[RMDB]
RNA sequence: GGGAACGACUCGAGUAGAGUCGAAAAUGACCUGUCCCCUGAGGAUUGGGACGAUUUAGAGGAACAAGCGGCACAUUAUCAUGAUGAUGAUGAGCUAAUCCUUCCAGUAAAAAGGAAGGUGGUUAAGAAGAAACCUCAGGCACUCAGAAGGAAACCCCUUCUGAACUAGUUUCGACUAGUUCAGAAGAAAAGAAACAACAACAACAAC
Reactivity to 2A3 in 0.01 (KOAc 150mM, MgCl2 10mM, bicine 150mM(pH8.5), 24C), signal-to-noise 3, nucleotides 027 to 156: u100g060a080c010c010u020g040u030c020c020c000c020u040g090a030g050g040a160u080u120g030g030g010a010c020g000a010u080u030u200a070g020a060g060g050a110a030c030a170a020g080c040g030g010c020a000c000a030u000u020a010u010c030a080u130g180a080u170g000a000u000g010a010u010g000a090g000c020u030a050a020u060c000c000u000u000c000c000a050g060u200a060a070a030a020a020g000g000a000a010g010g000u030g010g000u090u110a110a040g030a060a010g050a060a070a000c030c000u000c020a000g020g000c010a000c050u070c010a050g030a090a030g080g030a050a120a110c010c040c040
Reactivity to DMS in 0.01 (KOAc 150mM, MgCl2 10mM, bicine 150mM(pH8.5), 24C), signal-to-noise 3, nucleotides 027 to 156: u000g010a160c020c020u010g010u000c020c100c010c080u030g010a130g020g000a150u000u030g010g000g020a050c030g010a070u010u020u010a130g000a080g020g000a060a090c040a150a100g060c040g000g020c010a090c010a020u000u000a030u000c040a200u010g000a150u010g010a000u010g000a050u000g000a040g030c000u000a070a140u010c000c000u010u000c000c000a240g010u010a050a100a130a150a130g010g000a020a000g020g020u000g000g000u000u000a060a140g010a120a130g000a100a120a180c020c010u010c040a090g000g000c050a220c050u000c020a070g010a190a090g020g000a060a070a140c040c040c040
The record gives the reactivity of an RNA of 207 nucleotides to 2A3 and DMS. Conditions: 150 mM KOAc, 10 mM MgCl2 and 150 mM bicine (pH 8.5), 24 C. 2A3 is a SHAPE reagent: it acylates the 2'-hydroxyl of flexible nucleotides of all four kinds. For 2A3 the reverse transcriptase was SuperScript II with manganese. DMS adducts were read by reverse transcription with MarathonRT. It was measured as part of the RMDB library OK3TST.